[RMDB]
An RNA of 177 nucleotides, treated with DMS and 2A3 and read out base by base. The DMS profile rests on 10,947 reads. For DMS the reverse transcriptase was MarathonRT. For 2A3 the reverse transcriptase was SuperScript II with manganese. It was measured as part of the RMDB library OK2TST.

RNA sequence: GGGAACGACUCGAGUAGAGUCGAAAAUGACCAAGGAACACUGGUCGGAGGUGAAGGCGCGGGAAGUUACCGAGCACUGUCGGAAGCACGCUGACGAACUCCCCGACGAGAUAGUCGUGGCCAGCGGGCCGAAUAUAGAGUUCGCUCUAUAUUCGGCAAAAGAAACAACAACAACAAC
Reactivity to DMS in 0.01 (KOAc 150mM, MgCl2 10mM, bicine 150mM(pH8.5), 24C), signal-to-noise 8, nucleotides 027 to 126: u000g000a160c020c010a110a100g010g010a110a080c080a090c080u000g000g010u000c010g010g020a300g010g010u000g010a100a170g000g000c040g010c030g010g000g010a050a070g010u010u000a100c110c010g000a050g000c080a080c160u000g010u000c060g000g000a150a150g000c100a060c080g010c010u000g000a100c060g000a080a080c060u000c030c010c020c010g000a070c020g010a060g000a060u000a130g010u000c010g010u010g000g010c030c010a020g020c060g010g010
Reactivity to 2A3 in 0.01 (KOAc 150mM, MgCl2 10mM, bicine 150mM(pH8.5), 24C), signal-to-noise 6, nucleotides 027 to 126: u100g040a020c010c010a030a040g110g020a150a060c030a020c070u020g020g000u050c050g000g120a130g000g020u080g020a040a020g040g000c030g000c020g000g000g030a020a040g020u040u040a090c040c040g000a010g030c060a030c150u120g050u180c060g060g080a060a020g020c030a020c080g000c010u030g040a100c030g020a060a030c000u040c010c010c000c000g090a160c000g000a010g020a040u080a040g020u030c040g040u100g010g010c000c010a010g020c020g020g040